[RMDB]
RNA sequence: GGGAACGACUCGAGUAGAGUCGAAAAGAAAGAAAGAAAGAACUCUGUAAAGUGAGGGAUUGCCUGGACCAGGUCGGCGGGCCUGCUCCAGUUUCCUUCGCUCUGCUAAACGGGCAGACCGCCACAAAAAACGCGUGGCUGUUCGCAGCCACGCGAACUUAUUACAGGAGUUCGCUCCUGUAAUAAGAAAAGAAACAACAACAACAAC
Reactivity to 2A3 in 0.01 (KOAc 150mM, MgCl2 10mM, bicine 150mM(pH8.5), 24C), signal-to-noise 1, nucleotides 027 to 156: g060a000a050a010g070a040a110a030g010a030a120a000g030a050a030c070u070c070u160g030u180a130a130a040g000u010g030a000g000g030g020a050u040u210g030c000c000u000g000g000a010c000c000a000g000g000u030c060g040g030c020g020g000g030c000c000u010g010c000u000c000c010a000g000u000u040u000c000c000u030u040c000g030c000u030c010u000g000c010u070a120a090a050c070g010g010g000c000a010g050a110c020c020g050c010c010a060c080a030a150a040a050a040a040c030g010c050g000u000g000g000c000u030g040u030u100c260g010c070a000g000c020c000a000c090g040c000g000a000a000
Structure probing data (2A3) for a 207-nucleotide construct. The RNA was probed in 150 mM KOAc, 10 mM MgCl2 and 150 mM bicine (pH 8.5) at 24 C.